[RMDB]
RNA sequence: GGGAACGACUCGAGUAGAGUCGAAAAGAUAUGGACCCACCCUUCGUUGAAAGUACGUGGGUCGGAAACGACCUUACUGGAGAAGGUGGGUCCUAAGUCAAAAGUCUUUACGUUCGCGUAAAGACAACAAUAUAUAAGCCUUCGGGCUUAUAUAUUGAAAAGAAACAACAACAACAAC
Reactivity to DMS in 0.01 (KOAc 150mM, MgCl2 10mM, bicine 150mM(pH8.5), 24C), signal-to-noise 5, nucleotides 027 to 126: g010a010u000a010u010g000g000a010c000c010c000a010c190c130c180u000u000c010g020u010u010g000a180a180a040g000u000a010c300g020u010g010g000g020u000c010g010g000a000a010a010c010g000a010c000c000u000u000a010c010u000g000g010a010g010a040a040g010g030u000g000g000g000u000c000c000u010a000a060g000u000c010a110a130a150a180g010u010c000u000u000u000a000c000g010u000u010c300g020c000g030u000a010a010a010g010a000c000a060a140
Reactivity to 2A3 in 0.01 (KOAc 150mM, MgCl2 10mM, bicine 150mM(pH8.5), 24C), signal-to-noise 4, nucleotides 027 to 126: g000a000u020a010u050g000g010a000c020c020c000a000c190c110c030u050u000c010g300u220u110g070a090a060a020g010u030a030c300g250u200g030g030g000u000c000g000g000a010a000a000c010g000a000c000c010u070u090a010c040u070g030g000a030g000a030a000g000g020u000g010g000g000u000c000c000u000a000a010g000u000c010a000a010a020a130g000u000c000u010u010u010a010c020g030u010u100c300g000c000g160u010a000a000a010g010a010c000a000a000
Background:
Chemical mapping of a 177-nucleotide RNA with DMS and 2A3. Values cover nucleotides 27 to 126. DMS adducts were read by reverse transcription with MarathonRT. For DMS, 9,627 sequencing reads were counted. The reactions ran in a buffer of 150 mM KOAc, 10 mM MgCl2 and 150 mM bicine (pH 8.5), at 24 C.